[RMDB]
RNA sequence: GGGAACGACUCGAGUAGAGUCGAAAAAAUAUAACCUGCUUCUUGUAGAGCUUGAACAUCACCUUGCAGAGAAGAUAUACUGCCUUUGGCUGUAUUCACUUCUUGUGUGACUGCCGCAAUGUUAGUUUCAUUCGUUUUUACAGAAUUAGUUAAUCCAGUUUUAACCACGAUUCGUCGUGGUUAAAACAAAAGAAACAACAACAACAAC
Reactivity to 2A3 in 0.01 (KOAc 150mM, MgCl2 10mM, bicine 150mM(pH8.5), 24C), signal-to-noise 2, nucleotides 027 to 156: a010a000u270a010u050a060a040c010c010u070g010c060u110u010c010u040u060g060u080a010g010a000g030c000u000u060g040a040a030c020a060u060c030a050c010c020u010u090g010c020a000g000a000g030a130a000g010a030u060a000u010a140c030u030g050c040c010u160u090u300g020g010c010u010g030u020a030u040u050c130a100c100u010u040c000u010u070g040u000g010u020g060a060c080u090g000c010c020g040c050a030a030u070g010u050u030a090g030u120u010u040c030a010u030u070c050g070u000u030u030u130u060a020c000a010g000a020a050u090u130a040g060u040u060a040a040u300c290c060a000
An RNA of 207 nucleotides, treated with 2A3 and read out base by base. For 2A3, 696 sequencing reads were counted. The RNA was probed in 150 mM KOAc, 10 mM MgCl2 and 150 mM bicine (pH 8.5) at 24 C. Values cover nucleotides 27 to 156. It was measured as part of the RMDB library OK3TST.